[RMDB]
RNA sequence: GGGAACGACUCGAGUAGAGUCGAAAACAUACUUUAUUGCCAAAAGCCUAUCCUGCAAUGCUUCUGAAUUCGUGACCCUUGUUGAGAGCAUACUUUCUCCUCUAUAUUUAUUGGAAAUCGAUAAGAAGCUUGUGUAAAUAUUCGUAUUUACACAAGCAAAAGAAACAACAACAACAAC
Reactivity to DMS in 0.01 (KOAc 150mM, MgCl2 10mM, bicine 150mM(pH8.5), 24C), signal-to-noise 4, nucleotides 027 to 126: c070a100u010a080c080u000u000u010a080u020u000g000c040c050a070a100a100a110g000c030c030u000a080u000c030c000u000g020c060a060a070u010g010c020u000u000c030u010g000a090a100u000u000c060g030u010g010a180c030c020c020u000u000g020u000u000g000a080g010a070g000c090a070u000a090c090u000u000u000c030u000c010c050u000c040u000a070u010a070u010u010u000a070u000u000g000g010a050a100a120u000c030g010a060u000a050a080g020a130a150
Reactivity to 2A3 in 0.01 (KOAc 150mM, MgCl2 10mM, bicine 150mM(pH8.5), 24C), signal-to-noise 5, nucleotides 027 to 126: c010a010u230a090c010u100u150u120a080u130u110g030c000c010a060a080a030a040g000c010c020u060a060u060c000c010u000g010c030a050a050u060g020c020u050u030c000u040g120a140a110u050u030c010g030u020g070a090c010c010c000u000u010g020u060u050g070a050g010a000g070c020a020u050a150c020u030u080u050c010u000c000c010u000c020u030a060u030a070u300u160u040a100u040u060g010g000a070a100a070u190c010g020a020u050a090a050g090a080a020